[RMDB]
Chemical mapping of a 177-nucleotide RNA with DMS and 2A3. The 2A3 profile rests on 2,419 reads.

RNA sequence: GGGAACGACUCGAGUAGAGUCGAAAAGUCCCCACUUUCGAGUGGGGACAAUCAAAGUUUUGGCACUCGCAGCCCGGAGCGUUGGUGCUCCCACGCGGUGCAUAACUGCCUACUUCGGUAGGCAGAACCACCAUACUCUGUUCGCAGAGUAUGGUGGAAAAGAAACAACAACAACAAC
Reactivity to DMS in 0.01 (KOAc 150mM, MgCl2 10mM, bicine 150mM(pH8.5), 24C), signal-to-noise 2, nucleotides 027 to 126: g020u000c000c000c000c000a020c000u000u000u030c160g020a010g060u000g000g010g000g040a000c000a010a060u000c100a080a100a100g030u000u000u010u000g010g000c000a020c010u010c030g050c020a100g000c120c160c190g010g010a000g030c000g000u020u020g010g010u000g000c010u000c000c000c080a100c140g020c040g010g010u010g000c010a050u000a030a170c000u010g000c000c000u010a010c000u000u010c140g010g000u000a010g000g000c000a000g000a070a070
Reactivity to 2A3 in 0.01 (KOAc 150mM, MgCl2 10mM, bicine 150mM(pH8.5), 24C), signal-to-noise 2, nucleotides 027 to 126: g000u000c000c000c000c000a000c000u120u060u090c300g090a010g000u000g000g010g010g000a010c010a000a010u070c010a000a040a040g050u050u080u200u210g080g000c000a000c010u290c070g020c000a030g050c030c110c000g010g000a010g010c010g060u160u300g090g120u300g040c000u010c000c000c000a030c060g000c020g000g000u000g000c040a010u040a030a050c000u000g010c010c000u010a000c000u010u060c180g120g000u000a000g000g010c000a010g000a000a020
Reactivities are given for positions 27 through 126. The RNA was probed in 150 mM KOAc, 10 mM MgCl2 and 150 mM bicine (pH 8.5) at 24 C.